An RNA of 207 nucleotides, treated with 2A3 and read out base by base. 2A3 adducts were read by reverse transcription with SuperScript II with manganese. Conditions: 150 mM KOAc, 10 mM MgCl2 and 150 mM bicine (pH 8.5), 24 C.
[RMDB]
RNA sequence: GGGAACGACUCGAGUAGAGUCGAAAAACGUCAGCUCCUUGAGCCUCAUCUUCCUCAUCUGUAAAAUGGGAACAGUGAGGGCACUCGCCACCAGGCGUGCUGUGAAGAUGAGAUGAGAUCUCCUGGGCUCUGCGUGUGGCAUGGGGUGGCUGUGCAACGCAUUACGCCUAUUCGUAGGCGUAAUGCGAAAAGAAACAACAACAACAAC
Reactivity to 2A3 in 0.01 (KOAc 150mM, MgCl2 10mM, bicine 150mM(pH8.5), 24C), signal-to-noise 3, nucleotides 027 to 156: a010c050g090u080c010a030g030c070u070c050c000u060u100g010a010g020c020c000u000c020a010u020c010u070u020c000c020u080c050a250u160c040u030g100u110a000a100a130a100u200g080g030g050a060a050c040a000g000u000g000a020g000g000g000c000a000c000u060c080g010c000c020a160c050c030a080g010g000c000g020u000g000c140u020g020u000g140a020a040g040a060u200g000a000g000a010u090g040a040g000a090u080c000u010c040c020u030g040g020g000c010u040c030u120g020c020g050u090g020u050g060g000c080a080u090g050g000g090g000u080g010g020c080u080g010u110g050c050a020a020